Structure probing data (2A3 and DMS) for a 177-nucleotide construct. As a SHAPE reagent, 2A3 marks flexible, mostly unpaired nucleotides at the ribose 2'-OH. The reactions ran in a buffer of 150 mM KOAc, 10 mM MgCl2 and 150 mM bicine (pH 8.5), at 24 C.
RNA sequence: GGGAACGACUCGAGUAGAGUCGAAAAUGUGUGUAGGAUUCCAAAUGAUCACCAUUAAAUUUGGUACAAAUUUUCAUAAAAGUUAUCACAUGGGUGUGGGACUUGACUUUUUUUAGAGAUUUGUGUCAAUUACUGCAGAGUUCGCUCUGCAGUAAUUAAAAGAAACAACAACAACAAC
Reactivity to 2A3 in 0.01 (KOAc 150mM, MgCl2 10mM, bicine 150mM(pH8.5), 24C), signal-to-noise 5, nucleotides 027 to 126: u060g100u000g010u010g030u040a080g070g110a120u150u020c050c010a040a040a110u160g040a060u080c010a020c040c010a010u000u170a060a090a070u140u070u070g000g000u020a000c010a000a040a030u050u070u050u070c020a020u060a060a040a000a000g000u010u030a050u170c010a010c050a110u140g270g010g060u180g060u030g030g050g030a050c030u060u050g010a030c010u000u020u060u050u020u030u050a060g010a000g000a020u000u010u010g000u000g000u010c000
Reactivity to DMS in 0.01 (KOAc 150mM, MgCl2 10mM, bicine 150mM(pH8.5), 24C), signal-to-noise 4, nucleotides 027 to 126: u010g010u020g010u010g010u000a060g010g010a130u010u020c040c050a050a080a080u020g000a110u010c050a120c020c030a050u020u010a080a090a080u030u020u010g000g010u010a020c020a020a020a020u000u000u010u010c020a050u000a010a010a020a030g000u000u010a050u040c020a030c030a060u020g020g010g040u000g020u000g000g000g010a060c200u010u010g000a020c000u000u000u000u010u010u000u010a130g010a020g010a010u000u000u000g000u000g010u000c030